[RMDB]
RNA sequence: GGGAACGACUCGAGUAGAGUCGAAAACAAGUUCGUGCUUGCGACUUACACGUAGGCCGAGGGGUGGGCGAAAGUUGCCAUGAGACCGUAACUUUCGUAGUCAUUGAUAAAGGGGCAGGUCUCGCUCAAAAGACGUUGGUCUUCGGACCAACGUCAACUUCCAUUCUCACUUCGGUGAGAAUGGAAGAAAAGAAACAACAACAACAAC
Reactivity to 2A3 in 0.01 (KOAc 150mM, MgCl2 10mM, bicine 150mM(pH8.5), 24C), signal-to-noise 2, nucleotides 027 to 156: c050a000a080g050u050u040c000g090u180g050c000u020u020g000c010g040a140c170u170u240a050c210a010c070g010u010a010g010g000c020c000g010a040g010g010g030g090u230g010g000g010c010g010a000a000a000g000u000u000g020c080c100a190u150g070a010g000a020c000c000g020u030a000a000c000u000u000u000c060g000u000a010g020u030c070a100u040u300g150a080u120a050a060a010g020g000g000g050c100a010g010g000u050c000u000c010g000c020u160c050a040a050a030a030g040a000c000g000u000u000g000g000u000c000u010u100c180g070g010a000c000c000a010a000c000g000u000c000a000a000

An RNA of 207 nucleotides, treated with 2A3 and read out base by base.
The RNA was probed in 150 mM KOAc, 10 mM MgCl2 and 150 mM bicine (pH 8.5) at 24 C.
Values cover nucleotides 27 to 156.